[RMDB]
RNA sequence: GGGAACGACUCGAGUAGAGUCGAAAAUGAUCACCGGUCGGGUUAGGGACGACGACCCAGGGCUGGCGCCCCAUCUCGGUGAACACCCAUCCGGCGCUGUUGGCCAGGAACGGGGCGGGCAUGGUUACUCAUAGGUGCCUUUCGAGGCACCUAUGAGAAAAGAAACAACAACAACAAC
Reactivity to DMS in 0.01 (KOAc 150mM, MgCl2 10mM, bicine 150mM(pH8.5), 24C), signal-to-noise 1, nucleotides 027 to 126: u000g010a070u000c060a100c020c040g000g000u000c090g000g020g000u010u010a140g020g090g010a040c070g000a090c100g020a050c050c010c040a110g010g040g050c020u010g000g000c070g010c030c010c040c030a090u000c010u010c050g000g040u000g010a030a040c020a030c040c010c010a150u010c100c110g000g020c140g010c100u000g000u010u000g000g020c000c020a140g020g000a030a120c180g010g000g010g030c020g000g010g010c100a040u020g000g020u020u020a120

This 177-nucleotide RNA was probed chemically with DMS. It was measured as part of the RMDB library OK2TST. The DMS profile rests on 945 reads. DMS adducts were read by reverse transcription with MarathonRT.